The data come from the RNA Mapping Database (RMDB), library OK3TST. This 207-nucleotide RNA was probed chemically with 2A3 and DMS. For DMS the reverse transcriptase was MarathonRT. For 2A3, 3,174 sequencing reads were counted.
[RMDB]
RNA sequence: GGGAACGACUCGAGUAGAGUCGAAAACUUCUUUCAAGGUCUUUCAUUCCUUCUUUUAAGUUCUUGAACUUUCGGUUCCGUCUUUCUGGAUAACGAUGUAAAACAUUUUUGUGGCUGUCACCACUGCUUAGUUAUUCUUGAUCAAGAUAUAAUGAAGAGCACUAUAACAAUUCGUUGUUAUAGUGCUAAAAGAAACAACAACAACAAC
Reactivity to 2A3 in 0.01 (KOAc 150mM, MgCl2 10mM, bicine 150mM(pH8.5), 24C), signal-to-noise 6, nucleotides 027 to 156: c000u040u030c000u030u170u070c060a040a030g030g000u040c020u050u120u100c070a100u090u150c020c000u090u100c050u060u200u050u110a080a040g010u060u060c020u040u070g030a080a060c010u060u160u160c100g040g020u050u050c030c030g030u000c030u000u060u000c020u020g020g000a030u020a020a020c020g030a040u050g040u110a030a090a130a090c060a110u090u120u080u130u140g030u020g020g020c090u060g090u150c010a010c040c010a000c010u020g000c010u090u090a040g000u030u010a040u100u020c030u060u090g050a070u080c050a030a020g030a020u050a020u060a170a120u150g060a050a050g040
Reactivity to DMS in 0.01 (KOAc 150mM, MgCl2 10mM, bicine 150mM(pH8.5), 24C), signal-to-noise 2, nucleotides 027 to 156: c030u000u000c010u010u000u010c020a080a070g000g050u000c030u000u010u000c030a130u000u000c030c020u020u010c030u030u010u000u000a030a170g010u000u000c030u000u000g000a040a060c050u010u000u000c080g030g020u000u000c020c020g010u000c060u000u010u030c040u010g030g020a080u000a030a100c030g000a070u000g010u000a050a080a070a170c050a110u000u000u000u000u000g030u000g010g030c010u000g020u010c100a120c030c020a040c040u020g000c030u000u000a150g010u000u000a040u000u000c020u000u010g000a090u000c100a060a070g010a080u000a090u000a080a100u010g000a080a130g000
The reactions ran in a buffer of 150 mM KOAc, 10 mM MgCl2 and 150 mM bicine (pH 8.5), at 24 C.